[RMDB]
RNA sequence: GGGAACGACUCGAGUAGAGUCGAAAAUGGGUGCAUUUCAAUCAUUAAAGUAACAACAAUGAUACAUCAAAUAGUGUCUGCUCAGAUUCUGAGUGCCUGUUUAAACAUUUCCAUCUUGUGACUUGCCAGAUUCUAGCAUAACAACCCAGGUAAAAGAUGCUCCACUUAUAUUCGUAUAAGUGGAGCAAAAAGAAACAACAACAACAAC
Reactivity to DMS in 0.01 (KOAc 150mM, MgCl2 10mM, bicine 150mM(pH8.5), 24C), signal-to-noise 2, nucleotides 027 to 156: u020g010g010g030u000g010c030a100u000u020u020c010a080a060u020c020a170u040u010a080a100a170g030u020a060a170c020a040a070c110a040a070u010g010a100u000a050c050a160u000c030a050a050a050u000a110g020u010g000u000c030u010g000c030u000c070a070g000a120u010u000c030u010g010a190g040u010g000c050c050u010g040u000u000u000a060a050a080c060a100u000u000u000c020c010a080u010c050u000u010g000u000g020a070c060u010u020g040c020c040a160g030a150u000u000c020u020a090g040c050a060u000a100a040c060a050a090c030c010c010a210g000g020u000a020a030a050a180g000a230
Reactivity to 2A3 in 0.01 (KOAc 150mM, MgCl2 10mM, bicine 150mM(pH8.5), 24C), signal-to-noise 2, nucleotides 027 to 156: u030g000g000g000u060g060c030a030u010u050u150c070a040a000u010c010a010u010u130a170a130a060g090u110a120a020c030a010a030c020a040a030u020g020a030u040a100c050a070u100c030a080a000a060u120a040g060u050g030u030c040u080g050c020u030c020a070g040a300u160u080c000u010g050a020g000u030g050c000c000u030g000u000u080u080a040a100a000c050a020u070u000u050c080c000a060u020c060u050u050g070u010g010a050c020u000u040g030c000c010a000g010a030u020u070c020u030a010g040c030a050u040a090a030c020a000a010c000c000c010a010g010g010u100a050a100a000a010g300a010
Chemical mapping of a 207-nucleotide RNA with DMS and 2A3. The reactions ran in a buffer of 150 mM KOAc, 10 mM MgCl2 and 150 mM bicine (pH 8.5), at 24 C. It was measured as part of the RMDB library OK3TST. The 2A3 profile rests on 1,061 reads. The DMS profile rests on 2,355 reads. For DMS the reverse transcriptase was MarathonRT. Values cover nucleotides 27 to 156.